Chemical mapping of a 177-nucleotide RNA with 2A3 and DMS. For DMS, 2,099 sequencing reads were counted.

RNA sequence: GGGAACGACUCGAGUAGAGUCGAAAAGCAAAGAAAUUUUAUCGCAAUAAGGCGAAGCGUGCAAGUCGAAUAAAGCUAAUGCUGCUAGCGAGCACGCGAGCCCUAGCAGACUCCUAGCGAGAAAAAACUAAUGACAUGUCUUCGGACAUGUCAUUAGAAAAGAAACAACAACAACAAC
Reactivity to 2A3 in 0.01 (KOAc 150mM, MgCl2 10mM, bicine 150mM(pH8.5), 24C), signal-to-noise 3, nucleotides 027 to 126: g040c040a130a100a030g170a030a200a050u100u160u090u050a190u110c030g010c050a070a070u090a200a030g010g020c030g040a070a030g000c000g000u020g000c020a070a060g080u110c030g110a060a070u180a180a080a010g010c040u060a190a000u230g050c060u020g000c010u030a000g010c010g030a000g000c000a000c030g010c010g010a010g030c000c000c010u010a020g010c000a010g060a160c020u000c030c030u030a020g000c010g030a020g000a060a060a020a020a000a000
Reactivity to DMS in 0.01 (KOAc 150mM, MgCl2 10mM, bicine 150mM(pH8.5), 24C), signal-to-noise 3, nucleotides 027 to 126: g000c090a060a060a070g000a080a080a100u000u000u000u000a100u020c020g030c020a130a120u000a060a140g000g000c000g010a070a190g000c000g050u000g000c020a110a190g030u000c050g000a090a080u000a040a120a050g020c000u000a090a070u010g010c030u000g000c150u010a100g000c050g010a220g000c000a000c040g010c020g000a220g000c030c000c020u000a020g010c070a080g000a070c100u010c020c010u000a090g000c030g000a080g010a000a030a040a070a090a100
For 2A3 the reverse transcriptase was SuperScript II with manganese.